[RMDB]
RNA sequence: GGGAACGACUCGAGUAGAGUCGAAAAUGGAUGAUACGCAGAGAAGCGGACAAACGCCUUCCAUGGAUCAGCUGACAUUGCAGUGCGUGCAGGUAAACAAAUUUCGAAGACAGGUCACUGUAGUAGAAUAGAUGCUUAGGUUCGCCUAAGCAUCUAUAAAAGAAACAACAACAACAAC
Reactivity to 2A3 in 0.01 (KOAc 150mM, MgCl2 10mM, bicine 150mM(pH8.5), 24C), signal-to-noise 7, nucleotides 027 to 126: u050g030g010a020u040g020a040u100a140c020g000c010a000g010a000g010a090a010g020c040g070g090a020c080a010a040a000c030g030c020c000u010u010c020c000a020u050g050g010a060u040c030a030g030c040u040g030a050c020a070u030u120g000c040a010g020u020g060c020g020u050g030c030a020g050g070u170a030a080a050c060a020a120a070u090u100u110c040g030a050a010g080a040c020a020g020g060u110c030a020c070u020g010u050a030g030u010a020g050a020
Reactivity to DMS in 0.01 (KOAc 150mM, MgCl2 10mM, bicine 150mM(pH8.5), 24C), signal-to-noise 8, nucleotides 027 to 126: u000g000g010a040u000g000a080u030a120c020g000c010a030g000a070g000a030a030g010c020g020g020a120c130a010a020a030c030g010c020c020u000u000c010c010a030u010g010g000a300u010c080a080g000c050u000g000a100c100a060u020u010g010c030a030g020u010g000c080g020u010g000c050a060g000g010u020a040a070a080c220a040a060a110u010u020u010c060g010a100a120g020a070c060a040g010g010u030c070a030c010u010g010u010a040g010u010a060g010a110